[RMDB]
RNA sequence: GGGAACGACUCGAGUAGAGUCGAAAACUAAUGAGUAAGGAAAAUAUUGAGCCCUGGUAACGCUUGGCUCGGCUAUAAUAUAAUUAAUAGCUUUGAAUUUUUGAAGGGGUCGAGGUCGUCCUCUGGAGAUCUCGCUUGAAUUCGUUCAAGCGAGAUCAAAAGAAACAACAACAACAAC
Reactivity to 2A3 in 0.01 (KOAc 150mM, MgCl2 10mM, bicine 150mM(pH8.5), 24C), signal-to-noise 2, nucleotides 027 to 126: c080u100a070a130u250g090a070g070u100a140a140g090g060a060a050a030a070u180a040u010u260g010a000g000c000c000c010u030g000g010u020a000a000c020g000c020u000u040g000g020c010u010c000g010g000c000u010a000u000a000a000u130a080u130a230a090u300u070a100a070u000a030g010c000u020u000u140g110a170a170u020u010u140u050u300g160a080a060g040g040g000g000u030c000g020a040g000g190u010c000g000u000c010c000u020c010u000g000g000a030
This 177-nucleotide RNA was probed chemically with 2A3. It was measured as part of the RMDB library RFM100. The 2A3 profile rests on 617 reads. For 2A3 the reverse transcriptase was SuperScript II with manganese.